The record gives the reactivity of an RNA of 177 nucleotides to 2A3. Values cover nucleotides 27 to 126. The 2A3 profile rests on 224 reads. The data come from the RNA Mapping Database (RMDB), library OK1LIB.
RNA sequence: GGGAACGACUCGAGUAGAGUCGAAAAGCGAAUGGUUACUCAAUUUCAUGGAUUGUUUGAAGUUGGACAUUACCACAAUUGGAUGCCGACCAGCUCAGCGGUCUAGUGGUUAAGUGUUCGCGCGUGAGCAGUGCGAGCCAUUCGUGGCUCGCACUGCAAAAGAAACAACAACAACAAC
Reactivity to 2A3 in 0.01 (KOAc 150mM, MgCl2 10mM, bicine 150mM(pH8.5), 24C), signal-to-noise 1, nucleotides 027 to 126: g130c070g010a000a070u170g000g000u000u190a000c000u000c030a030a030u020u160u170c130a030u160g210g040a300u270u210g160u290u250u080g000a000a000g000u000u000g010g010a030c000a110u100u090a230c000c000a110c130a020a170u090u270g000g130a070u200g040c020c020g100a180c000c000a000g000c200u170c240a170g060c040g000g000u050c000u100a100g010u000g100g000u000u060a070a000g090u000g000u000u070c040g000c000g000c000g060u040g000a000
About this RNA
The reactions ran in a buffer of 150 mM KOAc, 10 mM MgCl2 and 150 mM bicine (pH 8.5), at 24 C.